[RMDB]
RNA sequence: GGGAACGACUCGAGUAGAGUCGAAAAGGAAAGCGUAGCGCGUGAGAAACGUGCUGGGAUAGCGUUGACUGUAGGCUAUUCCAGUGUGCGAGAAGCACACUACGCUUAUCUACAGUCAAAUAAGGUAGGUUGAGGUAGUUUUCGAACUACCUCAACCAAAAGAAACAACAACAACAAC
Reactivity to 2A3 in 0.01 (KOAc 150mM, MgCl2 10mM, bicine 150mM(pH8.5), 24C), signal-to-noise 3, nucleotides 027 to 126: g090g000a120a000a000g030c010g020u000a000g000c000g000c010g000u040g020a110g240a080a170a000c000g000u000g000c000u000g020g000g020a020u010a000g010c060g020u050u080g000a000c000u000g020u010a010g030g020c000u000a000u000u000c000c010a000g000u000g000u010g000c050g000a020g100a180a010g060c000a000c000a010c000u000a000c000g000c000u000u000a000u000c000u000a000c000a000g000u000c010a000a040a020u190a070a000g230g150u210a040
The record gives the reactivity of an RNA of 177 nucleotides to 2A3. The 2A3 profile rests on 2,530 reads. It was measured as part of the RMDB library OK1LIB. Conditions: 150 mM KOAc, 10 mM MgCl2 and 150 mM bicine (pH 8.5), 24 C.